The record gives the reactivity of an RNA of 177 nucleotides to 2A3 and DMS.
RNA sequence: GGGAACGACUCGAGUAGAGUCGAAAACAGAUGCCCGUGGACUGAUUCAGUCAUCCAGAGCUCACGCAAUUGUGGCUUUGACUCGCCAUACGGAGAAGUGUGUGGUGGUUGAUGCGCCAGGGCUUCUUGAGAGUGUAGAGUUCGCUCUACACUCUCAAAAAGAAACAACAACAACAAC
Reactivity to 2A3 in 0.01 (KOAc 150mM, MgCl2 10mM, bicine 150mM(pH8.5), 24C), signal-to-noise 2, nucleotides 027 to 126: c020a010g010a070u040g010c020c020c030g170u170g010g030a200c100u130g040a150u100u070c030a010g020u030c000a010u030c010c010a030g040a020g080c060u100c120a030c000g030c090a130a260u190u200g020u020g020g020c000u100u090u090g070a080c050u010c070g000c000c000a020u040a080c020g140g060a160g060a300a120g080u040g000u010g050u100g100g010u010g000g030u010u060g000a010u050g040c030g000c020c000a000g000g000g100c000u000u000c000u020
Reactivity to DMS in 0.01 (KOAc 150mM, MgCl2 10mM, bicine 150mM(pH8.5), 24C), signal-to-noise 2, nucleotides 027 to 126: c140a100g000a020u000g050c000c010c000g020u010g050g010a080c050u010g010a110u000u000c080a020g000u010c020a050u010c050c000a140g020a120g000c000u000c010a030c050g030c230a080a150u000u030g050u000g010g010c020u000u000u000g000a130c150u000c150g010c000c000a050u000a030c040g000g000a140g020a120a060g010u010g030u020g030u000g000g000u000g000g000u000u000g010a020u000g020c290g000c020c040a130g000g000g000c000u000u000c030u000
Conditions: 150 mM KOAc, 10 mM MgCl2 and 150 mM bicine (pH 8.5), 24 C.